[RMDB]
Structure probing data (2A3 and DMS) for a 177-nucleotide construct.
For DMS, 17,775 sequencing reads were counted.
2A3 adducts were read by reverse transcription with SuperScript II with manganese.
The RNA was probed in 150 mM KOAc, 10 mM MgCl2 and 150 mM bicine (pH 8.5) at 24 C.
The 2A3 profile rests on 39,653 reads.
RNA sequence: GGGAACGACUCGAGUAGAGUCGAAAACUACAUAAAUUCGUUUAUGUAGCAUCGGGGACGCGCAGACUCCCCCUCAGACGGCUCUAGCCUUCCAAGCUCUGCACUCAACAGCUUUCGAGCUGUUGAACUUCAUAUCAAGAUUCGUCUUGAUAUGAAGAAAAGAAACAACAACAACAAC
Reactivity to 2A3 in 0.01 (KOAc 150mM, MgCl2 10mM, bicine 150mM(pH8.5), 24C), signal-to-noise 9, nucleotides 027 to 126: c000u010a000c000a000u020a010a020a020u080u080c120g040u050u010u010a000u000g000u000a000g010c020a080u170c080g000g000g000g000a010c080g100c010g000c290a000g010a040c010u000c000c010c010c030c000u020c020a050g010a030c030g010g010c020u060c130u290a070g000c010c000u050u010c040c030a010a020g010c040u000c000u010g000c010a020c040u020c000a000a010c000a000g020c000u070u090u210c250g140a010g000c000u000g000u000u000g000a000a000
Reactivity to DMS in 0.01 (KOAc 150mM, MgCl2 10mM, bicine 150mM(pH8.5), 24C), signal-to-noise 9, nucleotides 027 to 126: c010u000a000c000a000u000a000a010a030u000u010c190g010u000u000u000a000u000g000u000a000g000c060a120u010c230g010g000g010g010a020c160g010c140g010c010a010g000a030c030u000c000c000c000c010c040u000c070a150g000a060c090g000g010c010u010c240u010a110g010c010c010u000u000c030c060a030a040g010c080u000c010u000g000c020a170c250u000c000a000a000c000a000g010c000u000u000u010c170g000a020g020c000u000g000u000u000g000a010a130